[RMDB]
RNA sequence: GGGAACGACUCGAGUAGAGUCGAAAAGUAUGUGCUGAUUAAAAGGUGGCAGCUUCUUGAUUAUCAUUGGUUCUUGCUGAGGAAUGUAUUCUAAUUAGGCCAGUUACCAACACAUAAGAUUCGAUGUCAUAUGAAGUAAGUUCGCUUACUUCAUAUGAAAAGAAACAACAACAACAAC
Reactivity to 2A3 in 0.01 (KOAc 150mM, MgCl2 10mM, bicine 150mM(pH8.5), 24C), signal-to-noise 9, nucleotides 027 to 126: g030u030a030u080g040u010g010c020u020g030a180u240u150a060a080a040a040g040g000u020g020g000c010a010g000c000u050u020c030u070u160g100a150u040u160a060u140c080a040u010u050g030g000u040u020c010u020u050g000c030u040g020a050g040g060a060a050u120g080u170a150u050u050c020u020a080a150u100u050a040g020g020c000c010a010g010u020u040a040c010c010a040a020c050a010c010a090u110a070a050g050a110u050u110c050g040a040u140g040u060
Reactivity to DMS in 0.01 (KOAc 150mM, MgCl2 10mM, bicine 150mM(pH8.5), 24C), signal-to-noise 9, nucleotides 027 to 126: g010u010a020u010g010u000g000c040u000g010a090u010u030a080a120a130a220g000g020u000g000g010c020a050g000c030u010u000c060u010u010g010a110u010u000a040u000c080a120u010u000g010g000u000u000c020u000u000g010c050u000g010a130g010g000a040a040u010g010u010a070u000u000c040u000a060a110u000u010a130g010g010c020c030a040g000u020u000a040c030c020a040a050c130a070c160a050u010a040a070g010a150u000u000c030g010a120u020g000u010